[RMDB]
RNA sequence: GGGAACGACUCGAGUAGAGUCGAAAAGGUUACUACCAGAGCCAGAAGUCACUGCGCUCGGCGCUAAAAGCCUUGCUGGUUACCCAUGUGGCAGCCAUCGGCCUGUAUUUGGCGGCAGCAGUGCUACCCCAGGAACAGAGUUCGCUCUGUUCCUGGGAAAAGAAACAACAACAACAAC
Reactivity to DMS in 0.01 (KOAc 150mM, MgCl2 10mM, bicine 150mM(pH8.5), 24C), signal-to-noise 1, nucleotides 027 to 126: g000g010u000u000a090c050u000a140c060c080a190g010a070g000c000c020a140g010a140a120g000u020c050a030c060u000g030c030g020c030u010c120g030g030c040g040c030u000a010a050a070a180g010c050c020u010u020g000c110u010g000g010u010u010a030c010c010c010a170u000g050u020g010g070c010a030g040c010c000a070u000c070g020g020c040c120u000g030u000a140u020u000u000g020g030c020g010g040c050a060g010c040a050g010u000g010c040u020a090c100
Reactivity to 2A3 in 0.01 (KOAc 150mM, MgCl2 10mM, bicine 150mM(pH8.5), 24C), signal-to-noise 1, nucleotides 027 to 126: g020g020u060u080a070c030u090a060c060c060a030g010a070g040c020c020a030g040a220a000g130u220c010a010c020u010g020c040g050c060u100c200g040g000c020g030c000u040a170a070a070a000g000c000c040u090u140g040c010u020g030g030u070u040a010c000c000c030a220u250g200u300g000g000c000a000g000c010c000a020u060c110g020g000c000c010u230g050u150a300u030u100u050g100g000c000g050g000c030a040g000c010a010g010u040g000c030u060a050c010